[RMDB]
RNA sequence: GGGAACGACUCGAGUAGAGUCGAAAAAGGCGACUUUGAAGGCACCGGGGUUGACUCGUAUAUAGACCUAAGCAUUGGGUUUUCGAUAUGGCUGCCGUUGCUGGGCGAGGGCUACUACCUUCCUUACGGGCAUGUUGACAUGCGGGGAGUCGAGGGCCGAUAGUGAACCAUUCGUGGUUCACUAUCGAAAAGAAACAACAACAACAAC
Reactivity to 2A3 in 0.01 (KOAc 150mM, MgCl2 10mM, bicine 150mM(pH8.5), 24C), signal-to-noise 3, nucleotides 027 to 156: a000g080g010c040g020a080c060u100u060u130g080a060a070g040g000c020a010c030c010g030g010g010g010u000u080g070a040c030u000c060g040u000a040u000a020u040a150g100a050c010c010u050a120a040g070c090a170u110u130g010g000g000u030u020u030u100c050g020a030u070a060u140g070g000c060u070g050c010c000g040u030u050g000c020u050g000g030g010c020g000a050g010g000g000c000u050a060c010u040a020c000c000u040u070c000c010u030u090a050c070g010g050g000c020a020u050g020u070u120g120a080c030a060u020g020c060g000g010g000g000a030g040u000c010g030a060g000g040g000c000
Reactivity to DMS in 0.01 (KOAc 150mM, MgCl2 10mM, bicine 150mM(pH8.5), 24C), signal-to-noise 2, nucleotides 027 to 156: a080g040g020c050g010a080c040u000u000u010g000a130a090g020g010c020a050c040c030g010g000g010g000u010u000g010a120c030u000c020g040u000a100u010a110u000a130g010a060c010c040u010a070a190g020c060a120u030u000g020g020g020u020u000u000u000c070g010a080u000a090u010g040g030c010u000g000c000c010g000u000u000g030c020u000g000g020g030c020g000a060g020g010g000c030u000a110c050u020a060c040c020u010u020c030c020u000u000a070c040g000g000g000c030a040u000g010u020u000g010a100c080a080u000g000c050g000g030g030g000a070g030u010c050g020a100g000g010g020c120